[RMDB]
RNA sequence: GGGAACGACUCGAGUAGAGUCGAAAACUCUUGUUAGGUGAAAGUUGAUGGUCGCCGUGUCAGUCCAUGCCUUUGAAAACAGUUCUAUGUAGUAGGGAGUCGAGAACCUAUGAGAGUUAGAACUUUCUAUGCCUUGGACUCUUCGGAGUCCAAGGAAGAACAUGCUAAGGUUCGCCUUAGCAUGUUCAAAAGAAACAACAACAACAAC
Reactivity to DMS in 0.01 (KOAc 150mM, MgCl2 10mM, bicine 150mM(pH8.5), 24C), signal-to-noise 2, nucleotides 027 to 156: c050u000c030u000u000g020u000u010a080g000g010u000g000a060a060a130g020u010u010g020a090u000g010g020u010c030g020c020c010g050u010g010u000c050a110g000u000c060c020a070u000g010c030c020u000u000u000g000a070a070a030a080c090a070g020u000u000c030u000a100u000g020u010a210g010u010a050g010g020g000a100g030u000c090g020a270g000a100a090c020c020u010a030u010g010a170g020a180g020u000u000a050g020a020a070c050u000u000u000c050u000a100u000g010c000c010u000u000g010g000a040c000u010c000u000u010c290g060g010a050g010u000c000c000a000a000g000g010a010a020
Reactivity to 2A3 in 0.01 (KOAc 150mM, MgCl2 10mM, bicine 150mM(pH8.5), 24C), signal-to-noise 2, nucleotides 027 to 156: c010u050c030u040u090g100u070u060a080g010g020u050g060a150a060a050g030u070u040g050a100u050g060g010u050c030g040c050c040g020u000g040u050c040a020g040u010c030c000a020u070g040c000c030u090u060u170g110a070a070a020a020c040a060g010u060u030c020u040a060u110g030u060a050g040u020a000g020g040g040a050g020u000c010g010a020g030a130a000c000c000u030a060u070g030a050g000a020g060u030u050a030g010a040a010c000u030u030u000c040u050a100u130g050c010c030u000u000g000g000a010c000u000c010u040u040c200g120g000a010g000u000c000c000a000a000g000g000a000a000